[RMDB]
RNA sequence: GGGAACGACUCGAGUAGAGUCGAAAACAGGUGCAGUCCCUCACCUGCGAAGUGGAUGCACUCAAAGGGACUAAUGAGUCUCUGGAACGCCAGAUGCGUGAAAUGGAAGAGAACUUUGCCGUCGAAGGUUAUGACCCUACUUCGGUAGGGUCAUAACAAAAGAAACAACAACAACAAC
Reactivity to DMS in 0.01 (KOAc 150mM, MgCl2 10mM, bicine 150mM(pH8.5), 24C), signal-to-noise 3, nucleotides 027 to 126: c090a080g010g000u020g000c070a080g000u020c000c000c000u000c020a040c050c060u000g030c140g000a060a040g050u000g020g020a100u050g000c040a040c070u020c100a050a090a040g000g000g020a020c010u010a120a090u010g020a080g000u010c010u000c010u020g000g010a130a050c160g020c030c090a130g010a070u020g000c060g000u020g000a020a130a130u050g020g000a080a020g000a050g000a080a050c030u010u000u010g010c080c100g040u000c050g010a190a050g000
Reactivity to 2A3 in 0.01 (KOAc 150mM, MgCl2 10mM, bicine 150mM(pH8.5), 24C), signal-to-noise 5, nucleotides 027 to 126: c020a020g000g010u030g030c030a030g120u100c020c020c000u040c010a030c020c010u030g060c100g030a080a030g030u130g070g040a080u210g060c030a040c030u060c010a060a060a040g010g000g000a010c000u030a070a160u220g050a010g050u000c010u000c000u000g010g070a100a000c040g020c040c020a100g030a190u180g030c050g010u110g050a130a060a090u200g060g020a070a010g060a040g010a080a020c020u020u090u120g050c050c020g050u140c060g070a080a040g100
This 177-nucleotide RNA was probed chemically with DMS and 2A3. Conditions: 150 mM KOAc, 10 mM MgCl2 and 150 mM bicine (pH 8.5), 24 C. The data come from the RNA Mapping Database (RMDB), library OK1LIB. Reactivities are given for positions 27 through 126.